[RMDB]
RNA sequence: GGGAACGACUCGAGUAGAGUCGAAAAACAGUUCCAGCUGCUACGGCAGCUGGUACUGAACUUUCAUGGAGUUAAGAAACCACGUAAACAAAGCGGAACCGAAAAGCUAAACGAGUAGGAAGAAUAAAUAGGUACCACCACUUCGGUGGUGGUACAACGUAGGUAGGCAGUUCGCUGCCUACCUACGAAAAGAAACAACAACAACAAC
Reactivity to 2A3 in 0.01 (KOAc 150mM, MgCl2 10mM, bicine 150mM(pH8.5), 24C), signal-to-noise 2, nucleotides 027 to 156: a000c020a020g010u020u000c000c000a010g020c000u000g000c000u000a040c120g060g020c000a000g000c010u000g010g000u000a010c000u000g000a030a000c000u080u210u200c100a190u130g060g030a050g030u150u120a170a000g050a090a070a000c030c010a030c060g080u140a060a130a000c070a070a130a000g000c000g010g010a080a130c030c000g050a000a000a000a000g010c090u250a160a000a000c000g010a000g020u000a000g110g030a040a020g010a090a110u300a120a130a060u120a090g180g000u010a020c000c020a000c000c000a030c020u020u030c150g070g020u030g000g010u000g000g000u010a000c000a000a000